[RMDB]
An RNA of 177 nucleotides, treated with 2A3 and DMS and read out base by base. The reactions ran in a buffer of 150 mM KOAc, 10 mM MgCl2 and 150 mM bicine (pH 8.5), at 24 C. DMS (dimethyl sulfate) methylates the pairing face of unpaired adenines and cytosines. For DMS the reverse transcriptase was MarathonRT. Source: RMDB library OK2TST, as collected in RNAgym.
RNA sequence: GGGAACGACUCGAGUAGAGUCGAAAAUCGCACCAUUCCUUAACCCACCAACAGAAUCUAAGGAUUGGAAAGUAAAAGUGGAUUUUAGGGACUUCCGCCUUAUGGUUUGGAAGGAUAAGACAGCAUCUCCUUCCUAGUGUUUCGACACUAGGAAGGAAAAAGAAACAACAACAACAAC
Reactivity to 2A3 in 0.01 (KOAc 150mM, MgCl2 10mM, bicine 150mM(pH8.5), 24C), signal-to-noise 2, nucleotides 027 to 126: u010c000g010c040a080c020c010a050u090u040c000c000u000u060a060a060c000c000c000a020c020c020a000a100c020a140g160a140a020u030c020u070a110a010g100g000a010u010u100g010g070a120a070a000g080u110a020a010a050a050g020u050g100g020a080u010u130u040u070a090g050g000g000a020c000u000u000c040c010g020c040c010u280u210a220u300g010g010u070u110u120g050g000a000a020g020g000a000u010a080a040g080a020c030a030g020c030a100u060c010
Reactivity to DMS in 0.01 (KOAc 150mM, MgCl2 10mM, bicine 150mM(pH8.5), 24C), signal-to-noise 3, nucleotides 027 to 126: u000c040g010c090a200c030c030a130u000u000c020c010u000u010a020a140c190c010c010a090c100c100a090a100c200a120g000a060a010u010c040u020a040a160g020g000a020u000u020g010g000a110a070a100g030u020a020a050a080a110g010u000g000g000a050u000u000u000u010a110g020g000g020a090c030u000u000c010c030g010c010c010u020u010a150u010g010g020u000u000u010g030g010a020a010g000g030a050u000a060a080g010a050c090a100g000c110a130u000c120